An RNA of 177 nucleotides, treated with DMS and 2A3 and read out base by base. 2A3 adducts were read by reverse transcription with SuperScript II with manganese. The reactions ran in a buffer of 150 mM KOAc, 10 mM MgCl2 and 150 mM bicine (pH 8.5), at 24 C.
RNA sequence: GGGAACGACUCGAGUAGAGUCGAAAAUUACUGAGGAUGUGGUUGCAAGGUGGGAUUCAGAUAGGGAACUAAAGGGUCUAUCCAAUUUCAAAGAAGCAGUUAUUGCAACGCUAAAUCUUUUGGAUGAGAAUACAACACUUUUCGAAGUGUUGUAUUCAAAAGAAACAACAACAACAAC
Reactivity to DMS in 0.01 (KOAc 150mM, MgCl2 10mM, bicine 150mM(pH8.5), 24C), signal-to-noise 6, nucleotides 027 to 126: u000u010a120c060u000g010a080g010g010a090u000g020u010g000g010u000u010g010c050a060a080g010g030u000g000g000g000a080u000u010c110a060g010a090u000a050g000g010g020a110a060c110u010a040a070a150g000g010g010u010c060u010a060u000c020c080a050a060u000u010u000c130a050a050a060g010a060a090g010c080a070g010u000u010a090u010u000g010c160a020a030c050g000c040u000a030a120a120u000c010u000u000u010u000g010g010a060u000g000a130
Reactivity to 2A3 in 0.01 (KOAc 150mM, MgCl2 10mM, bicine 150mM(pH8.5), 24C), signal-to-noise 3, nucleotides 027 to 126: u080u040a060c030u060g040a010g030g030a050u080g010u070g100g070u070u060g030c040a060a060g030g060u060g040g010g030a020u090u110c030a000g020a080u070a020g060g010g020a050a030c020u080a140a040a040g080g020g000u000c010u000a020u000c010c010a050a060u090u080u070c090a090a070a040g030a050a010g030c060a050g060u060u060a160u200u190g010c020a010a030c020g000c040u070a070a090a130u050c000u040u070u060u060g030g000a030u050g050a030